[RMDB]
RNA sequence: GGGAACGACUCGAGUAGAGUCGAAAAACUAAUUAUAUAGAGGAUAUGUCUCAAUUUGUUCUGCAUUAAUGCCACAGUGGGGAUGGAGGCCAGGCCGUGGCCAGAGCAGAUACGUAGGCCCAUGAAACAAACGGAAUGGGUUCGCCCAUUCCGUUUGAAAAGAAACAACAACAACAAC
Reactivity to DMS in 0.01 (KOAc 150mM, MgCl2 10mM, bicine 150mM(pH8.5), 24C), signal-to-noise 1, nucleotides 027 to 126: a080c000u020a010a070u060u040a150u030a140u050a090g000a100g000g020a060u060a050u020g000u000c030u000c000a050a030u010u000u040g000u000u030c000u000g000c160a170u000u010a060a080u050g000c100c030a000c060a080g010u000g040g010g010g050a060u010g050g000a120g010g020c030c010a060g020g000c050c040g010u010g020g010c040c080a070g000a050g000c050a030g000a010u000a040c050g020u000a000g000g000c030c000c000a130u000g020a130a110a110
Reactivity to 2A3 in 0.01 (KOAc 150mM, MgCl2 10mM, bicine 150mM(pH8.5), 24C), signal-to-noise 2, nucleotides 027 to 126: a000c010u010a040a040u300u110a130u120a120u180a120g010a040g060g030a070u080a050u220g180u010c000u000c040a050a040u020u020u110g060u060u010c000u020g000c040a040u070u210a150a060u110g000c010c000a020c000a010g040u040g080g040g000g100a040u150g070g070a080g110g000c030c010a020g000g010c040c020g050u050g000g000c000c000a040g000a000g030c000a000g010a030u100a060c060g060u020a010g070g000c040c000c000a030u140g100a090a080a010
Conditions: 150 mM KOAc, 10 mM MgCl2 and 150 mM bicine (pH 8.5), 24 C. The record gives the reactivity of an RNA of 177 nucleotides to DMS and 2A3. Source: RMDB library RFM100, as collected in RNAgym. For 2A3, 1,062 sequencing reads were counted. For DMS, 1,874 sequencing reads were counted.